This 177-nucleotide RNA was probed chemically with 2A3 and DMS. The data come from the RNA Mapping Database (RMDB), library OK2TST. High DMS reactivity at an A or C suggests that its Watson-Crick edge is free. The RNA was probed in 150 mM KOAc, 10 mM MgCl2 and 150 mM bicine (pH 8.5) at 24 C. For DMS, 1,371 sequencing reads were counted. DMS adducts were read by reverse transcription with MarathonRT. For 2A3, 1,452 sequencing reads were counted.

RNA sequence: GGGAACGACUCGAGUAGAGUCGAAAACUGUCACAUGCUCUACAGAUUACAGGAUUCUUAGCCUCUUCCUUUUUGGUAGGUCAGUCCUGGGUUUGAGCCCAAGUGACCCUCCUGGGAGGUGAUGAUAGCCCAUAUGUACCUUCGGGUACAUAUGGGCAAAAGAAACAACAACAACAAC
Reactivity to 2A3 in 0.01 (KOAc 150mM, MgCl2 10mM, bicine 150mM(pH8.5), 24C), signal-to-noise 2, nucleotides 027 to 126: c020u020g020u030c020a000c010a130u090g050c020u030c010u110a040c030a090g070a130u020u160a070c020a010g050g020a040u150u000c020u140u130a030g020c000c000u080c060u130u170c060c000u230u230u120u200u070g030g000u020a010g000g020u000c030a030g050u000c010c020u020g010g020g030u090u120u200g120a020g010c000c020c040a020a050g030u020g030a010c000c000c000u000c000c030u030g080g060g040a010g000g030u050g020a070u100g010a030u130a060
Reactivity to DMS in 0.01 (KOAc 150mM, MgCl2 10mM, bicine 150mM(pH8.5), 24C), signal-to-noise 2, nucleotides 027 to 126: c070u020g000u000c050a040c080a120u020g010c020u010c020u010a110c070a060g000a070u010u010a140c050a050g000g000a050u000u000c080u000u000a180g010c040c040u000c200u000u000c050c020u000u000u010u010u000g010g020u020a080g000g010u020c110a090g010u000c120c050u000g010g010g010u000u010u010g010a140g000c000c080c040a020a110g020u000g000a030c000c030c020u000c030c000u010g000g010g000a020g000g000u000g010a100u000g000a080u000a100